[RMDB]
RNA sequence: GGGAACGACUCGAGUAGAGUCGAAAAGCGGCUGCGUUCUCACAGAAGAUGGGCUCAGAGCGAGGAGGAGCCUCUCGGGUGAAGCGUGAGAAGAAGAAAGGAAAAGCAAAUCGUCAGACAUAACCAAACGAGUAGGCGGAUUCGUCCGCCUACUCGUAAAAGAAACAACAACAACAAC
Reactivity to 2A3 in 0.01 (KOAc 150mM, MgCl2 10mM, bicine 150mM(pH8.5), 24C), signal-to-noise 2, nucleotides 027 to 126: g010c030g040g000c000u010g020c010g100u060u020c070u030c030a060c000a020g290a290a070g000a060u070g000g070g020c010u020c020a090g000a020g070c100g000a020g040g000a060g000g020a000g000c000c000u000c000u000c000g050g000g000u000g140a090a040g000c030g090u060g090a060g000a080a000g060a070a000g020a070a070a020g050g080a090a040a000a030g070c000a000a000a210u050c070g000u020c020a000g050a020c010a120u160a060a090c000c100a100a070